[RMDB]
RNA sequence: GGGAACGACUCGAGUAGAGUCGAAAAGAUAUGGAGUUACACGCUCAACAGCGAUACAUUCGGAAACGAAUGAUCGACAUGAGCAAGUAACUCCUAAGUCAAACGAAUCGACUUCGGUCGAUUCGAACUGCACAGUAGAGUUCGCUCUACUGUGCAGAAAAGAAACAACAACAACAAC
Reactivity to DMS in 0.01 (KOAc 150mM, MgCl2 10mM, bicine 150mM(pH8.5), 24C), signal-to-noise 2, nucleotides 027 to 126: g000a050u020a300u000g000g010a050g000u000u000a000c000a100c300g000c000u010c000a040a150c300a120g000c000g000a010u000a150c000a020u000u000c020g000g000a060a020a090c000g000a020a020u000g000a020u020c030g000a050c060a300u000g000a020g050c010a160a300g020u010a000a000c010u000c020c000u000a000a070g000u000c060a090a070a100c000g000a030a000u000c000g040a040c000u000u020c300g010g060u000c000g020a050u010u000c000g020a020a070
Reactivity to 2A3 in 0.01 (KOAc 150mM, MgCl2 10mM, bicine 150mM(pH8.5), 24C), signal-to-noise 2, nucleotides 027 to 126: g030a000u030a050u190g010g020a030g000u010u040a040c040a030c120g000c020u030c030a230a140c120a230g000c000g000a030u120a240c030a010u000u000c010g000g030a020a030a050c010g030a000a000u010g010a010u010c000g080a070c070a270u300g010a000g010c000a020a010g010u000a000a010c010u000c010c000u010a000a000g000u000c030a000a050a100c030g020a000a000u010c000g010a030c020u050u090c300g060g000u020c000g000a000u000u010c020g000a020a040